[RMDB]
Chemical mapping of a 177-nucleotide RNA with DMS and 2A3.
RNA sequence: GGGAACGACUCGAGUAGAGUCGAAAAUGGUGUUAAGUGGAAUAAGUGGAAAAAUAUACAUAUAUGUACAGGGGGCUACAUAUAUGUAUAUGCCCCCUCGACUCAGUAUAAGUAGGUAUAAGGUGGAAUAAUACGGUGCAUUCGUGCACCGUAUUAUAAAAGAAACAACAACAACAAC
Reactivity to DMS in 0.01 (KOAc 150mM, MgCl2 10mM, bicine 150mM(pH8.5), 24C), signal-to-noise 4, nucleotides 027 to 126: u020g010g040u010g030u010u000a060a120g030u000g020g000a060a050u040a080a090g000u040g010g010a040a050a040a130a040u000a000u000a020c000a010u010a010u010a020u030g000u000a020c110a090g010g000g000g000g040c140u000a010c020a020u010a020u010a000u010g010u000a000u010a010u020g000c050c000c000c020c030u000c010g010a040c040u010c090a120g010u010a050u010a030a100g020u020a030g000g000u000a080u010a050a060g000g030u000g000g000a120
Reactivity to 2A3 in 0.01 (KOAc 150mM, MgCl2 10mM, bicine 150mM(pH8.5), 24C), signal-to-noise 2, nucleotides 027 to 126: u160g010g020u030g030u020u080a100a020g030u020g000g080a130a110u100a170a060g040u140g010g060a070a000a000a090a000u060a030u000a000c000a000u030a000u030a010u010g010u010a060c030a030g000g000g010g000g090c010u000a000c010a010u040a000u000a000u040g010u020a000u000a000u010g000c020c000c020c000c000u000c010g010a000c000u000c000a000g040u070a030u000a130a030g070u070a010g020g100u050a090u020a200a040g080g000u040g040g020a010
Background
High 2A3 reactivity points to a flexible backbone, as in loops and unpaired stretches. For 2A3, 1,003 sequencing reads were counted. For DMS, 7,508 sequencing reads were counted.